RNA sequence: GGGAACGACUCGAGUAGAGUCGAAAAGGGCUGAGCACUUUUGAUGCUUGCAGUUUAUACGAACCGGUAAGUAUAUACUGCUUGGAUACGAACCGGUAAGUAUCCUGGCAUCUUGUGCUCUGCCCAAGGGAAGUGGAACCUUCGGGUUCUGCUUCCCAAAAGAAACAACAACAACAAC
Reactivity to DMS in 0.01 (KOAc 150mM, MgCl2 10mM, bicine 150mM(pH8.5), 24C), signal-to-noise 5, nucleotides 027 to 126: g000g000g020c000u010g010a010g010c000a000c000u010u020u020u010g020a010u010g010c000u040u030g010c110a050g010u010u030u030a020u000a000c000g010a270a080c010c020g000g000u000a040a300g000u000a000u010a050u030a160c050u010g010c110u020u020g010g000a010u000a000c010g000a230a100c010c020g000g000u010a020a240g010u000a010u010c110c000u010g000g000c010a000u000c000u000u000g000u000g010c000u000c000u000g000c000c000c000a030a040
Reactivity to 2A3 in 0.01 (KOAc 150mM, MgCl2 10mM, bicine 150mM(pH8.5), 24C), signal-to-noise 9, nucleotides 027 to 126: g010g000g000c020u030g000a000g010c000a010c020u060u100u130u270g000a000u000g000c010u020u050g030c020a030g020u080u130u100a020u000a000c010g020a130a070c010c000g010g010u040a050a010g020u000a020u010a010u020a080c050u070g170c070u120u210g070g020a000u000a010c010g000a100a080c010c010g010g000u010a020a010g000u000a000u010c000c000u000g010g000c000a000u000c000u020u020g000u000g000c000u000c000u000g000c000c000c000a000a000